[RMDB]
RNA sequence: GGGAACGACUCGAGUAGAGUCGAAAAAGUCCUCCGACUGGUUACGACCAGUCGGUGGACAAGGAGGUCAGGGUCAGGAGCCCCCCCCUGAACCCAGGAUAACCCUCAAAGUCGGGGGGCAACCCAAAGGAGCGAUGAAGUUUCGACUUCAUCGCAACCUUGUAUGAAUCUUCGGAUUCAUACAAGGAAAAGAAACAACAACAACAAC
Reactivity to 2A3 in 0.01 (KOAc 150mM, MgCl2 10mM, bicine 150mM(pH8.5), 24C), signal-to-noise 2, nucleotides 027 to 156: a000g000u000c000c000u000c000c000g030a020c020u000g020g020u040u070a090c210g080a040c080c000a000g000u000c000g000g000u010g000g000a000c010a010a030g080g020a020g000g010u110c140a050g020g000g000u000c010a020g000g010a020g010c000c020c030c010c000c000c000c010u000g010a090a070c000c030c020a020g000g010a100u060a080a080c010c000c020u010c040a030a070a000g110u150c050g000g000g000g020g000g000c000a020a060c000c000c000a060a060a040g150g060a120g040c000g000a000u010g000a000a000g020u050u070u200c260g130a050c000u010u000c000a010u000c000g000c000a000a010